RNA sequence: GGGAACGACUCGAGUAGAGUCGAAAAAAUGUACCGGGGCUAAACAUAUUACCGAAGCUUUGGAUUGAUAUUUUAUCAAUGGUAGGAGAGCGUUCUUAACCGCAAUGAAGGUAUACCGUGAGGAGUGCUGGAGCGUUAAGAAGUGAGAAUGCCGGUAGGCGUGUAUAACGUUCGCGUUAUACACGCCAAAAGAAACAACAACAACAAC
Reactivity to 2A3 in 0.01 (KOAc 150mM, MgCl2 10mM, bicine 150mM(pH8.5), 24C), signal-to-noise 1, nucleotides 027 to 156: a000a000u070g010u030a010c010c060g000g000g020g090c090u100a060a030a060c030a090u180a100u160u160a030c010c010g070a030a000g030c000u020u140u110g020g040a000u000u040g000a000u000a070u070u210u180u160a040u100c010a000a030u050g070g000u050a030g020g030a030g000a000g030c030g000u030u000c000u010u010a000a010c170c130g000c010a060a300u070g000a020a030g000g070u020a030u070a070c000c000g010u010g030a020g000g020a050g010u020g000c000u020g000g010a020g000c000g000u000u010a000a010g010a010a010g030u050g090a030g060a020a000u030g070c020c010g000g000u000a050
Reactivity to DMS in 0.01 (KOAc 150mM, MgCl2 10mM, bicine 150mM(pH8.5), 24C), signal-to-noise 1, nucleotides 027 to 156: a060a010u000g000u000a050c010c030g000g000g000g030c100u030a120a080a100c020a170u000a110u000u000a100c040c030g030a120a150g040c050u010u000u000g040g040a140u010u020g020a010u000a060u000u010u000u000a100u000c000a000a080u010g010g040u000a070g000g010a140g020a170g000c000g030u000u000c010u000u000a000a010c020c040g070c020a120a100u000g000a090a130g000g000u000a080u020a130c080c010g010u010g000a170g040g040a300g050u010g000c000u010g010g000a030g050c000g040u000u000a020a050g000a050a150g050u000g000a070g000a250a100u010g000c000c000g010g050u000a120

The record gives the reactivity of an RNA of 207 nucleotides to 2A3 and DMS.
2A3 adducts were read by reverse transcription with SuperScript II with manganese.
The reactions ran in a buffer of 150 mM KOAc, 10 mM MgCl2 and 150 mM bicine (pH 8.5), at 24 C.
DMS adducts were read by reverse transcription with MarathonRT.